Chemical mapping of a 177-nucleotide RNA with DMS.
For DMS the reverse transcriptase was MarathonRT.
RNA sequence: GGGAACGACUCGAGUAGAGUCGAAAACCGCAACGGCGACCUUGACUACGGUGCCCUGCAUGGGCGCGGUCACCGCGUCACCGGAGGUCGCUGCGCCGGUGUGUCCACCGCGCUUGCGCGGCUUGGAGCGACGACUAUGCUUCGGCAUAGUCGUCGCAAAAGAAACAACAACAACAAC
Reactivity to DMS in 0.01 (KOAc 150mM, MgCl2 10mM, bicine 150mM(pH8.5), 24C), signal-to-noise 2, nucleotides 027 to 126: c070c000g020c120a060a100c030g030g000c010g000a030c000c000u010u040g000a090c050u010a140c000g000g020u000g010c080c000c000u010g070c080a150u000g000g000g000c130g020c070g030g000u000c010a020c010c030g030c300g020u010c020a070c180c100g000g000a040g000g010u000c030g000c150u000g000c030g050c300c010g000g000u000g010u000g000u000c000c000a100c000c010g000c000g030c020u000u010g040c020g010c010g000g000c150u000u000g000g040a200
The reactions ran in a buffer of 150 mM KOAc, 10 mM MgCl2 and 150 mM bicine (pH 8.5), at 24 C.